[RMDB]
RNA sequence: GGGAACGACUCGAGUAGAGUCGAAAAAAGAAGUGCCGUGCCUCGUCGGCCCGGCAUGCCAACCUGAUCCGAAGUUCAAGGUGGUUUCUCUGGCCUUCCAGAGAGAUGCGCGUCGGAAGAACCGACGAUGUUGUAGCCAGUUCGCUGGCUACAACAUAAAAGAAACAACAACAACAAC
Reactivity to DMS in 0.01 (KOAc 150mM, MgCl2 10mM, bicine 150mM(pH8.5), 24C), signal-to-noise 3, nucleotides 027 to 126: a050a030g000a100a110g000u000g000c000c000g020u000g000c000c000u030c260g000u030c300g010g030c040c010c040g000g010c000a000u000g000c220c070a100a060c010c000u010g000a040u050c090c090g020a120a070g030u020u000c110a080a050g020g000u000g020g020u000u040u020c000u000c000u000g000g000c300c110u010u030c030c000a030g000a020g040a040g010a010u020g000c080g010c030g020u010c000g000g000a150a090g020a060a100c000c010g000a050c020g010
Reactivity to 2A3 in 0.01 (KOAc 150mM, MgCl2 10mM, bicine 150mM(pH8.5), 24C), signal-to-noise 3, nucleotides 027 to 126: a000a000g120a090a010g030u000g000c000c000g010u000g000c000c000u250c050g200u050c110g080g000c000c000c020g000g020c010a000u010g030c000c000a050a100c000c000u030g010a030u060c050c080g260a150a020g070u170u000c040a070a020g020g000u010g000g000u030u030u050c000u000c000u020g000g000c030c050u300u240c080c010a000g000a000g000a000g010a070u120g040c050g000c000g000u000c000g000g040a110a080g040a070a100c000c000g000a000c000g000